Conditions: 150 mM KOAc, 10 mM MgCl2 and 150 mM bicine (pH 8.5), 24 C. Structure probing data (DMS and 2A3) for a 177-nucleotide construct.

RNA sequence: GGGAACGACUCGAGUAGAGUCGAAAAACAUGAUAGUGAACGAUCCGUAUCUGAGCGUUCAGCAACAACUGUCGGCUAUAUGCACCACGGUAGUGGAGCUCAGUAUGAAAUACGCCAAGAUGGUCGCACUAAGGUGGAACUUCGGUUCCACCUUAGUAAAAGAAACAACAACAACAAC
Reactivity to DMS in 0.01 (KOAc 150mM, MgCl2 10mM, bicine 150mM(pH8.5), 24C), signal-to-noise 4, nucleotides 027 to 126: a110c110a100u000g010a120u000a100g020u000g010a100a090c060g000a030u000c020c100g020u000a030u010c040u000g000a080g010c020g000u000u000c040a080g000c110a090a090c180a070a070c040u000g010u000c130g020g000c040u010a060u010a110u020g010c070a080c020c030a010c020g010g010u010a070g030u000g010g000a100g020c010u020c030a040g000u010a040u000g000a100a070a120u010a070c090g000c100c080a080a090g000a080u010g000g000u000c060g030c140
Reactivity to 2A3 in 0.01 (KOAc 150mM, MgCl2 10mM, bicine 150mM(pH8.5), 24C), signal-to-noise 3, nucleotides 027 to 126: a010c060a060u160g050a100u150a100g150u090g040a170a020c030g020a030u020c060c040g050u060a030u130c050u020g040a030g020c030g050u080u060c030a020g050c040a000a080c020a020a040c030u030g040u080c020g010g000c030u090a060u010a030u300g040c040a070c040c000a010c020g100g090u160a130g030u050g000g020a040g020c000u000c030a020g040u040a040u090g080a040a010a000u110a010c060g030c040c000a020a020g050a040u110g060g000u030c000g000c020
The data come from the RNA Mapping Database (RMDB), library OK2TRN.